An RNA of 177 nucleotides, treated with 2A3 and DMS and read out base by base. It was measured as part of the RMDB library OK1LIB. High DMS reactivity at an A or C suggests that its Watson-Crick edge is free. For 2A3 the reverse transcriptase was SuperScript II with manganese. The reactions ran in a buffer of 150 mM KOAc, 10 mM MgCl2 and 150 mM bicine (pH 8.5), at 24 C.
[RMDB]
RNA sequence: GGGAACGACUCGAGUAGAGUCGAAAAGAAGAUGCCAUCAUGAAAGCUUCGGUUUUCCGAUGUGAAAGUGAUGGAAAUCACCUAAACCAAUAGGUGCUGAACGCAGUUGGUUUGCGGAAAGAAAGAAGGGAUUUCUAAAGUUCGCUUUAGAAAUCCCAAAAGAAACAACAACAACAAC
Reactivity to 2A3 in 0.01 (KOAc 150mM, MgCl2 10mM, bicine 150mM(pH8.5), 24C), signal-to-noise 3, nucleotides 027 to 126: g150a030a020g010a020u080g000c000c000a000u000c000a000u090g050a030a080a030g000c000u010u020c010g030g050u080u050u130u090c000c000g010a000u030g050u020g100a120a050a050g000u000g030a000u000g000g020a100a040a000u020c000a040c000c010u000a010a040a000c000c000a030a040u010a100g060g140u010g010c040u110g090a050a030c060g000c040a020g020u040u060g050g080u040u120u050g050c040g040g060a040a040a030g140a030a100a020g180a110a050
Reactivity to DMS in 0.01 (KOAc 150mM, MgCl2 10mM, bicine 150mM(pH8.5), 24C), signal-to-noise 2, nucleotides 027 to 126: g010a150a100g000a000u050g000c000c000a030u000c000a000u010g000a120a160a270g000c000u000u030c010g000g000u010u040u000u010c000c000g030a000u010g010u000g000a130a090a300g000u010g000a010u000g000g030a000a050a010u030c000a070c000c000u000a030a050a210c040c210a090a040u000a100g010g020u000g000c130u010g000a190a130c060g010c020a230g000u010u010g000g020u000u030u010g060c130g030g000a040a090a300g000a070a030a130g020a100a120